RNA sequence: GGGAACGACUCGAGUAGAGUCGAAAAUCAUUGGACCCGUAGUCACGUCCAUUAGAAUUCGCUGAUAUCACGCAAGAGAACGAGAGUCAGCGUCACGGCCCAGCGGAUGCGUGAUAGUGACUAUGAGAAAUAUAUAUAAUUUCGAUUAUAUAUAUUUAAAAGAAACAACAACAACAAC
Reactivity to DMS in 0.01 (KOAc 150mM, MgCl2 10mM, bicine 150mM(pH8.5), 24C), signal-to-noise 2, nucleotides 027 to 126: u030c120a120u020u010g000g020a060c000c120c040g010u000a010g000u020c010a020c030g010u010c010c030a060u030u010a170g040a070a080u010u050c020g000c010u020g000a060u040a040u000c060a020c020g010c020a110a170g020a220g030a050a100c020g000a130g000a140g000u000c070a010g000c010g000u030c060a100c130g010g000c060c000c000a110g010c000g000g020a120u000g000c020g020u000g000a000u010a070g020u000g000a000c000u000a010u010g000a230g010
Reactivity to 2A3 in 0.01 (KOAc 150mM, MgCl2 10mM, bicine 150mM(pH8.5), 24C), signal-to-noise 2, nucleotides 027 to 126: u110c020a010u030u090g080g050a090c010c000c050g000u010a000g000u010c000a000c000g010u000c020c000a000u050u130a050g080a120a090u040u050c000g000c020u020g010a010u030a040u200c020a020c020g000c040a190a020g090a030g060a300a020c050g030a050g010a010g240u060c050a010g010c000g010u020c010a020c060g060g000c000c000c000a000g010c000g050g030a040u060g040c030g070u160g020a000u050a170g000u000g000a010c000u000a020u020g020a060g060
Structure probing data (DMS and 2A3) for a 177-nucleotide construct. The RNA was probed in 150 mM KOAc, 10 mM MgCl2 and 150 mM bicine (pH 8.5) at 24 C. For 2A3 the reverse transcriptase was SuperScript II with manganese. For DMS, 2,015 sequencing reads were counted. The data come from the RNA Mapping Database (RMDB), library OK1LIB. For 2A3, 1,100 sequencing reads were counted. For DMS the reverse transcriptase was MarathonRT.